An RNA of 207 nucleotides, treated with 2A3 and DMS and read out base by base. Values cover nucleotides 27 to 156.

RNA sequence: GGGAACGACUCGAGUAGAGUCGAAAAUGGAGAUGUUUUUUCUUGAGUUCCAUCACCAACCAAGAAAGGUUGCAGUGUGAAAGGAUAUAUCCAAAGGGGUUCGGAAUGUCGUAGCUCCCUUUUUCAUGGUGGACGACUCUUUCCCCCUGCUUUUCACCGAUCUAAAGUUCUUCGGAACUUUAGAUCGAAAAGAAACAACAACAACAAC
Reactivity to 2A3 in 0.01 (KOAc 150mM, MgCl2 10mM, bicine 150mM(pH8.5), 24C), signal-to-noise 2, nucleotides 027 to 156: u220g040g040a110g050a150u100g080u030u080u040u010u030u020c040u040u090g040a090g060u080u060c030c010a030u080c030a020c000c000a010a000c000c010a060a130g100a190a110a090g110g000u030u000g000c140a130g040u060g010u020g130a010a030a030g000g020a020u080a000u010a050u280c050c020a110a030a010g000g010g000g010u030u150c140g020g070a080a070u120g040u030c030g010u020a080g090c050u140c020c020c050u100u130u060u080u140c130a090u200g010g010u040g060g040a010c020g030a010c000u050c050u070u020u020c020c010c010c010c000u000g000c000u090u010u050u080c030a010c040
Reactivity to DMS in 0.01 (KOAc 150mM, MgCl2 10mM, bicine 150mM(pH8.5), 24C), signal-to-noise 1, nucleotides 027 to 156: u000g030g010a020g010a090u010g040u000u000u000u010u000u010c020u010u010g000a140g000u000u020c070c010a110u000c090a190c070c010a020a090c040c030a130a140g000a060a050a130g020g050u020u010g030c000a080g070u000g020u000g000a010a080a060g000g000a100u000a100u020a110u010c040c050a090a080a110g000g040g000g000u010u000c100g000g010a090a080u000g040u000c010g040u010a040g090c020u020c030c000c010u030u020u010u000u000c100a160u000g020g030u000g000g030a090c020g020a120c050u010c030u020u000u000c030c000c020c040c000u000g000c010u010u000u000u000c040a160c150